[RMDB]
RNA sequence: GGGAACGACUCGAGUAGAGUCGAAAACAACUGUUAUCUUGCCACUGCAUUGUUAACACUCCAACAAAUAGAGUUGAAGUUUAAUCCACCUGCUCUACAAAGGGCUGGUGAAGCUGCUAACUUUUGAUCCAACGAAUAUGUUCGCAUAUUCGUUGGAAAAAGAAACAACAACAACAAC
Reactivity to DMS in 0.01 (KOAc 150mM, MgCl2 10mM, bicine 150mM(pH8.5), 24C), signal-to-noise 2, nucleotides 027 to 126: c040a100a100c100u020g000u000u000a020u000c040u000u000g020c020c170a110c140u000g010c070a050u000u000g000u000u000a020a060c090a070c060u010c020c040a020a070c050a080a090a160u000a050g010a110g040u010u020g020a020a080g010u000u010u010a030a120u020c130c010a010c000c000u000g010c000u000c020u000a100c300a070a120a070g000g000g000c010u000g010g000u000g010a030a070g000c040u000g020c120u010a040a050c000u020u000u000u000g000a140
This 177-nucleotide RNA was probed chemically with DMS.
The data come from the RNA Mapping Database (RMDB), library 15KREP.
For DMS, 1,190 sequencing reads were counted.